[RMDB]
RNA sequence: GGGAACGACUCGAGUAGAGUCGAAAAAUUGUGUAGAAACGAGCAAUACAGGAGUGGUGCAUGGUCGUUGGAAAUUGAUGGGAUGACUUUGACCUUAAAUGGUUGAAUGAGUGAGAUCUUUUGGACAGGAUGUAGUUGCUUUCGAGCAACUACAUCCAAAAGAAACAACAACAACAAC
Reactivity to 2A3 in 0.01 (KOAc 150mM, MgCl2 10mM, bicine 150mM(pH8.5), 24C), signal-to-noise 2, nucleotides 027 to 126: a000u070u030g010u020g000u050a020g120a040a130a050c060g000a000g010c040a030a120u070a080c010a150g000g040a030g080u030g030g010u010g010c010a030u090g000g090u040c010g010u040u050g070g050a080a210a140u110u090g000a050u040g070g050g000a010u040g000a010c000u000u030u040g050a020c000c000u030u030a120a220a100u100g000g010u000u000g040a060a040u090g000a020g090u070g020a000g000a030u020c000u040u050u020u060g010g010a010c070a100
Reactivity to DMS in 0.01 (KOAc 150mM, MgCl2 10mM, bicine 150mM(pH8.5), 24C), signal-to-noise 1, nucleotides 027 to 126: a100u010u000g080u000g010u030a010g000a140a050a120c030g010a220g040c070a050a080u000a010c090a140g000g020a030g010u000g010g000u030g000c120a090u000g020g020u000c040g000u030u100g000g040a020a020a160u000u020g010a080u020g000g000g000a000u030g000a140c130u000u020u000g010a010c000c030u000u090a000a070a080u070g010g000u000u020g000a000a120u010g000a070g000u030g000a140g000a090u000c020u000u000u000u030g030g050a190c150a230